[RMDB]
Notes
Structure probing data (2A3 and DMS) for a 177-nucleotide construct. Values cover nucleotides 27 to 126. Source: RMDB library OK1LIB, as collected in RNAgym. For DMS, 3,371 sequencing reads were counted. The RNA was probed in 150 mM KOAc, 10 mM MgCl2 and 150 mM bicine (pH 8.5) at 24 C.
RNA sequence: GGGAACGACUCGAGUAGAGUCGAAAAUGAACUUUGGAUAAGAUCUACGUUUGGGAUUCUUCUUGGUGAUGGAUGAUGCCUAGACCAGCCCCAGACACCCUCCCAAGCCUAAGCUCCCCUCUCCAAAUGUUACGUACAUCUUCGGAUGUACGUAACAAAAAGAAACAACAACAACAAC
Reactivity to 2A3 in 0.01 (KOAc 150mM, MgCl2 10mM, bicine 150mM(pH8.5), 24C), signal-to-noise 5, nucleotides 027 to 126: u160g020a040a040c040u060u060u150g060g020a040u080a150a050g040a060u030c030u060a040c060g040u030u050u040g060g000g010a050u080u020c020u060u020c010u060u100g020g000u060g040a080u110g020g070a040u080g040a040u170g090c020c010u020a020g020a030c020c020a010g020c000c000c010c000a010g010a030c010a040c010c000c010u030c020c010c000a020a000g000c000c000u040a040a020g020c010u020c000c000c010c000u010c000u000c000c000a010a050a060
Reactivity to DMS in 0.01 (KOAc 150mM, MgCl2 10mM, bicine 150mM(pH8.5), 24C), signal-to-noise 3, nucleotides 027 to 126: u020g000a090a080c040u020u000u010g010g000a050u060a070a080g000a300u000c040u020a120c290g020u000u060u040g000g000g010a070u000u070c100u010u010c100u000u010g000g000u030g010a140u010g020g010a090u030g000a110u000g000c000c010u000a080g020a080c080c080a030g000c130c010c020c010a030g000a050c040a090c040c030c010u040c020c010c010a020a090g010c000c020u000a060a070g030c030u000c030c020c010c030u000c010u000c040c010a060a040a070